The record gives the reactivity of an RNA of 177 nucleotides to 2A3 and DMS.
[RMDB]
RNA sequence: GGGAACGACUCGAGUAGAGUCGAAAAGAUAUGGACCUAUCCUCGGCGAGCGAAGAACAGCCUCGGAAACGAGGCUGGGAGCUCCCGAGGAGUAGGUCCUAAGUCAAAACGGGAGGUUCGCCUCCCGGAACACUCUAGUGUUCGCACUAGAGUGUUCAAAAGAAACAACAACAACAAC
Reactivity to 2A3 in 0.01 (KOAc 150mM, MgCl2 10mM, bicine 150mM(pH8.5), 24C), signal-to-noise 2, nucleotides 027 to 126: g040a010u080a060u200g000g000a000c000c000u000a010u030c000c000u010c000g040g080c300g030a010g000c020g230a300a040g000a110a050c000a010g000c010c010u010c010g020g010a050a070a040c020g000a000g000g040c010u000g000g000g010a010g000c010u000c010c010c010g000a000g000g010a000g000u010a000g000g010u000c000c000u010a000a010g010u010c020a030a010a030a070c010g020g000g000a010g040g020u100u160c260g110c070c000u000c000c000c000g000
Reactivity to DMS in 0.01 (KOAc 150mM, MgCl2 10mM, bicine 150mM(pH8.5), 24C), signal-to-noise 6, nucleotides 027 to 126: g000a040u010a300u010g010g010a010c000c000u010a050u000c000c000u000c010g000g020c300g020a000g000c000g010a120a160g030a150a210c020a000g010c000c000u000c000g010g000a120a100a230c000g010a010g010g010c000u000g000g000g000a150g010c000u000c000c010c010g010a000g000g000a010g010u000a000g010g000u000c000c000u000a010a070g010u010c040a100a060a110a300c020g010g000g000a010g020g010u000u010c280g010c010c010u000c000c000c000g000
For DMS, 7,532 sequencing reads were counted. Source: RMDB library TTRDES, as collected in RNAgym. The reactions ran in a buffer of 150 mM KOAc, 10 mM MgCl2 and 150 mM bicine (pH 8.5), at 24 C.